[RMDB]
RNA sequence: GGGAACGACUCGAGUAGAGUCGAAAAAGGACACACACUCCGGCGGUCCGAAGCAACCCCACAUCGAGCCUAUCGGGAUAGCUGCGUUGGCCAGAGCGGGGCCGCCCCGCGGGGGUGAUGGGCACCGGUAGUGUGUAACGUUCGCGUUACACACUACAAAAGAAACAACAACAACAAC
Reactivity to DMS in 0.01 (KOAc 150mM, MgCl2 10mM, bicine 150mM(pH8.5), 24C), signal-to-noise 5, nucleotides 027 to 126: a100g000g000a200c060a060c030a050c040a030c030u000c020c020g020g030c080g020g000u010c060c030g020a110a090g010c110a070a100c030c020c010c010a100c110a080u000c020g010a290g000c030c020u000a080u000c070g010g020g010a190u010a080g020c080u010g010c080g010u010u000g010g010c020c050a280g010a090g020c030g000g000g010g010c090c060g010c050c020c010c020g010c080g000g010g000g010g010u000g010a070u000g010g010g000c020a090c000c020g000
Reactivity to 2A3 in 0.01 (KOAc 150mM, MgCl2 10mM, bicine 150mM(pH8.5), 24C), signal-to-noise 2, nucleotides 027 to 126: a010g040g000a030c010a000c010a000c000a020c070u030c010c000g080g030c070g030g040u030c070c070g030a080a000g000c030a020a050c000c010c010c000a030c020a160u070c040g060a010g030c010c030u110a120u180c030g100g100g100a240u120a170g120c130u150g040c060g060u060u080g010g030c000c020a020g000a020g020c030g010g010g000g020c020c040g010c000c010c000c000g020c040g050g000g000g000g000u030g010a100u030g000g050g000c090a070c090c000g000
An RNA of 177 nucleotides, treated with DMS and 2A3 and read out base by base. For 2A3 the reverse transcriptase was SuperScript II with manganese. For DMS, 4,687 sequencing reads were counted. The 2A3 profile rests on 2,364 reads. The reactions ran in a buffer of 150 mM KOAc, 10 mM MgCl2 and 150 mM bicine (pH 8.5), at 24 C. DMS adducts were read by reverse transcription with MarathonRT.